[RMDB]
RNA sequence: GGGAACGACUCGAGUAGAGUCGAAAAUAACGGGUCCCUAGUGCUCACCAAGCCUUUCAUCCCUCCGGGGUCGAUAAAUUGGUACCAGACCCGUCUGGGAGUGUAAAAGCACUGACUUGACACAUCGCGAUGAUACUGCUUUCGAGCAGUAUCAUCGAAAAGAAACAACAACAACAAC
Reactivity to 2A3 in 0.01 (KOAc 150mM, MgCl2 10mM, bicine 150mM(pH8.5), 24C), signal-to-noise 5, nucleotides 027 to 126: u220a030a020c020g020g000g030u130c010c000c000u010a020g040u050g150c020u020c050a020c000c000a010a000g000c000c020u040u030u020c060a160u100c030c020c010u040c130c190g020g000g000g040u040c110g010a010u030a040a040a010u030u020g020g010u010a090c020c010a000g030a100c020c000c000g020u030c010u010g030g010g020a090g000u020g020u060a240a300a070a020g040c030a260c270u130g030a100c000u040u050g050a010c000a010c000a140u090c100g010
Reactivity to DMS in 0.01 (KOAc 150mM, MgCl2 10mM, bicine 150mM(pH8.5), 24C), signal-to-noise 2, nucleotides 027 to 126: u050a080a040c020g000g020g040u000c000c090c010u020a040g010u060g000c010u010c050a050c000c000a030a030g000c000c000u000u000u040c000a160u000c010c000c000u000c220c200g070g000g020g010u010c090g010a000u000a030a090a010u000u000g010g000u000a120c000c000a080g010a080c030c010c020g000u010c020u000g000g000g010a110g040u030g010u000a030a030a050a040g000c020a080c150u000g000a030c020u000u030g000a110c070a050c080a070u040c180g020

Chemical mapping of a 177-nucleotide RNA with 2A3 and DMS. Source: RMDB library OK1LIB, as collected in RNAgym. For 2A3, 3,637 sequencing reads were counted. DMS adducts were read by reverse transcription with MarathonRT.